Structure probing data (2A3 and DMS) for a 177-nucleotide construct. The DMS profile rests on 5,999 reads. Conditions: 150 mM KOAc, 10 mM MgCl2 and 150 mM bicine (pH 8.5), 24 C. For 2A3 the reverse transcriptase was SuperScript II with manganese. Values cover nucleotides 27 to 126.
[RMDB]
RNA sequence: GGGAACGACUCGAGUAGAGUCGAAAAAAAAAGGCACUUCAGGUGGCUCUGGGGCGAAAGUACUGACGACAGACCAGAAGCGGGAAGCCGUUGAGUUUAUGUGUGAUGCGUCCGGUCUGUCGAAAAAGUUAUAGUGAAUGUUCGCAUUCACUAUAACAAAAGAAACAACAACAACAAC
Reactivity to 2A3 in 0.01 (KOAc 150mM, MgCl2 10mM, bicine 150mM(pH8.5), 24C), signal-to-noise 4, nucleotides 027 to 126: a000a000a000a000a050g040g000c020a010c030u060u040c040a030g020g040u030g040g000c010u040c070u080g000g000g000g020c030g020a040a010a010g050u020a050c030u040g040a020c000g000a000c000a000g010a000c000c010a000g010a040a000g020c020g030g060g030a040a010g030c010c030g030u040u100g120a160g100u150u240u060a110u060g150u020g030u040g030a050u130g010c020g000u000c000c020g000g010u020c000u010g000u000c000g010a010a000a000a000a000
Reactivity to DMS in 0.01 (KOAc 150mM, MgCl2 10mM, bicine 150mM(pH8.5), 24C), signal-to-noise 4, nucleotides 027 to 126: a030a030a050a060a050g000g000c040a030c070u000u000c080a060g010g000u000g010g000c050u010c050u000g010g000g000g000c170g000a050a030a050g010u010a100c080u000g010a190c010g000a030c000a010g010a030c000c000a050g010a050a030g020c020g000g010g010a080a170g010c020c010g000u000u000g000a100g010u000u010u010a020u020g000u010g020u000g000a150u000g010c010g000u000c010c030g010g010u000c000u000g010u000c000g000a010a030a050a070a040